[RMDB]
RNA sequence: GGGAACGACUCGAGUAGAGUCGAAAACAUAUUUCCUCCCUACACAGUGACUCCAGCUUGGGAGGGGCAGGGCUAGGCUGAGCCAGCACUCCCUGUGGUGUCUGCCUGCCACGUGCAGCUCUGGAGUAAAACCUGGAGAAGUUCGCUUCUCCAGGAAGACUCCAGUCAUGUUCGCAUGACUGGAGUCAAAAGAAACAACAACAACAAC
Reactivity to 2A3 in 0.01 (KOAc 150mM, MgCl2 10mM, bicine 150mM(pH8.5), 24C), signal-to-noise 2, nucleotides 027 to 156: c020a020u220a130u100u060u050c010c010u040c020c000c000u170a050c140a000c000a160g160u050g100a010c000u000c000c000a010g010c090u030u060g020g000g000a000g000g000g000g000c010a010g010g000g010c020u300a000g010g000c000u020g030a010g140c070c030a040g010c010a050c060u100c000c000c050u030g010u010g030g010u020g100u020c010u040g030c010c000u050g040c040c010a160c090g130u200g000c010a070g020c050u040c020u070g000g010a020g000u040a020a060a000a000c000c000u000g000g000a000g000a000a000g030u030u070c080g050c140u000u000c000u000c000c000a000g000g000a000a010

Source information
This 207-nucleotide RNA was probed chemically with 2A3. For 2A3, 912 sequencing reads were counted. High 2A3 reactivity points to a flexible backbone, as in loops and unpaired stretches. Conditions: 150 mM KOAc, 10 mM MgCl2 and 150 mM bicine (pH 8.5), 24 C.